[RMDB]
RNA sequence: GGGAACGACUCGAGUAGAGUCGAAAAGAUAUGGAUAGAGCAUCCACCGAAGAACUGACUCGGAAACGAGUCAGGGAGGUGUGAUGAACUACUCUAUCCUAAGUCAAAAGUACGCUUCGGCGUACAACACUCUUUGUUCCUUCGGGAACAAAGAGUGAAAAGAAACAACAACAACAAC
Reactivity to 2A3 in 0.01 (KOAc 150mM, MgCl2 10mM, bicine 150mM(pH8.5), 24C), signal-to-noise 1, nucleotides 027 to 126: g030a030u060a050u170g000g000a010u000a030g000a010g000c020a000u000c020c020a000c000c020g260a300a040g010a050a020c010u010g000a010c000u000c010g000g010a000a100a070c020g000a000g040u040c010a010g000g020g020a040g000g000u040g030u280g000a000u000g000a010a030c010u130a040c010u000c010u000a000u010c010c000u010a130a010g000u030c020a010a090a050a170g020u000a000c010g010c010u010u170c300g110g000c000g000u010a000c000a000a000
Reactivity to DMS in 0.01 (KOAc 150mM, MgCl2 10mM, bicine 150mM(pH8.5), 24C), signal-to-noise 2, nucleotides 027 to 126: g000a020u010a300u000g000g040a010u000a020g050a000g040c010a010u000c000c000a040c010c020g000a160a160g010a200a230c010u000g000a010c000u010c010g000g000a070a070a280c020g000a000g000u000c000a000g020g030g030a070g000g030u000g000u000g010a000u000g000a080a040c070u010a300c020u010c010u000a010u010c000c020u000a040a040g000u000c040a070a120a180a160g000u000a010c000g040c000u000u040c300g040g010c020g020u000a000c000a070a150
An RNA of 177 nucleotides, treated with 2A3 and DMS and read out base by base.
Values are in units of 0.01, from 0 to 300, in steps of 10.
2A3 adducts were read by reverse transcription with SuperScript II with manganese.
Reactivities are given for positions 27 through 126.